[RMDB]
RNA sequence: GGGAACGACUCGAGUAGAGUCGAAAAUCGACUGAGAUCGAUCCUCUAGCUUCAGGAUCUCGAUCGAAGCUGACUAGUCGAAGGAGAUCUCAGGAUCAGUCCUCUCUGACUGAAGUCAGGACUCUCUUCGAAGCUCUGACUAGGAUCGAAGUCGAGACGGACGGAAUACAUUCGUGUAUUCCGUCCGAAAAGAAACAACAACAACAAC
Reactivity to 2A3 in 0.01 (KOAc 150mM, MgCl2 10mM, bicine 150mM(pH8.5), 24C), signal-to-noise 3, nucleotides 027 to 156: u010c000g000a000c010u080g050a030g110a280u020c000g000a030u010c030c010u060c100u040a060g000c080u060u030c050a070g030g050a210u050c040u060c100g060a040u090c090g000a000a010g010c010u010g000a010c000u020a000g000u010c010g020a020a000g020g010a030g020a080u050c060u050c150a140g020g040a000u010c020a010g270u010c010c000u130c020u040c120u220g000a010c000u050g110a120a020g020u000c000a020g010g030a100c000u010c010u000c000u110u020c020g030a060a030g010c040u030c030u120g020a060c000u000a000g000g000a010u000c000g020a030a010g000u020c000g000a000g010a010

Structure probing data (2A3) for a 207-nucleotide construct. For 2A3, 1,821 sequencing reads were counted. It was measured as part of the RMDB library OK3TST. Reactivities are given for positions 27 through 156.